[RMDB]
RNA sequence: GGGAACGACUCGAGUAGAGUCGAAAAGUCUGUGCGUUUCCAUUUGAGUAUCCUGAAAACGGGCUUCUCAGCAUGGAACGUACAUAUUAAAUAGUAGGAGUGCAUAGUGGCCCGUAUAGCAGGCAUUGAGGCGAGGAUUGUUUCGACAAUCCUCGAAGAGCUAAAGGAGAUUCGUCUCCUUUAGCUCAAAAGAAACAACAACAACAAC
Reactivity to 2A3 in 0.01 (KOAc 150mM, MgCl2 10mM, bicine 150mM(pH8.5), 24C), signal-to-noise 3, nucleotides 027 to 156: g070u040c060u030g000u000g000c000g030u000u200u020c010c010a020u030u040u020g030a020g010u030a030u050c000c000u030g130a090a070a030a140c160g020g000g010c020u060u000c000u010c000a050g020c040a020u000g000g020a020a020c000g010u000a000c000a000u010a020u020u080a040a050a100u090a000g070u010a040g000g050a030g020u030g030c030a040u080a090g070u120g020g010c010c000c000g030u050a030u050a070g060c020a000g010g000c020a010u050u180g040a040g060g040c010g000a000g000g000a000u000u010g010u000u120u020c000g010a010c000a000a000u000c000c000u000c000g000a010a010
Reactivity to DMS in 0.01 (KOAc 150mM, MgCl2 10mM, bicine 150mM(pH8.5), 24C), signal-to-noise 2, nucleotides 027 to 156: g010u000c060u000g020u000g050c000g020u000u000u010c010c020a070u000u000u000g010a060g020u000a040u000c000c000u000g000a060a100a180a300c050g030g000g000c070u000u000c000u000c040a100g000c150a010u000g010g010a050a030c000g010u000a010c020a020u000a030u030u000a090a110a120u000a090g020u010a010g030g010a150g020u010g020c040a100u010a130g010u000g000g010c040c010c040g000u010a050u000a080g040c050a100g040g000c040a110u000u000g010a110g010g020c000g010a050g000g000a040u010u000g010u000u000u000c300g040a090c000a030a030u010c030c010u010c000g000a010a110
Source: RMDB library M2RFPK, as collected in RNAgym. Structure probing data (2A3 and DMS) for a 207-nucleotide construct. The RNA was probed in 150 mM KOAc, 10 mM MgCl2 and 150 mM bicine (pH 8.5) at 24 C. 2A3 is a SHAPE reagent: it acylates the 2'-hydroxyl of flexible nucleotides of all four kinds.